[RMDB]
RNA sequence: GGGAACGACUCGAGUAGAGUCGAAAAGAAAAGAAAGCUAUCGACUAGGCUCGAAAGAGCGAUAGCCGGAUGUCGAUCUGCUCCAACUAGUCGAAAGACAUCCGGAGCAGAAAAAGAAAAAGAAAAAGGGAUACAGUAUGUUCGCAUACUGUAUCCCAAAAGAAACAACAACAACAAC
Reactivity to DMS in 0.01 (KOAc 150mM, MgCl2 10mM, bicine 150mM(pH8.5), 24C), signal-to-noise 2, nucleotides 027 to 126: g000a120a000a080a140g000a090a290a220g000c010u030a110u000c020g000a110c020u040a080g010g000c000u000c000g000a130a000a210g000a020g000c000g000a030u040a000g020c000c030g000g000a110u050g000u000c140g020a060u000c000u000g000c000u000c010c010a160a100c250u070a050g050u000c000g030a130a080a120g000a010c000a020u020c170c090g000g010a040g000c020a040g000a020a070a020a180a130g020a040a040a010a070a160g020a110a140a070a090a090
Reactivity to 2A3 in 0.01 (KOAc 150mM, MgCl2 10mM, bicine 150mM(pH8.5), 24C), signal-to-noise 2, nucleotides 027 to 126: g040a000a100a000a000g110a040a060a010g050c030u040a000u030c030g050a110c210u170a140g030g070c000u010c030g020a070a070a020g080a000g020c020g030a040u060a020g000c000c000g020g020a060u050g040u100c030g020a060u000c010u030g030c030u000c030c000a070a090c060u070a030g020u000c010g000a020a030a030g020a000c020a000u010c080c080g000g000a000g010c010a000g000a030a070a000a090a010g090a020a030a000a000a000g100a000a090a000a010a030
Conditions: 150 mM KOAc, 10 mM MgCl2 and 150 mM bicine (pH 8.5), 24 C. Chemical mapping of a 177-nucleotide RNA with DMS and 2A3. 2A3 adducts were read by reverse transcription with SuperScript II with manganese.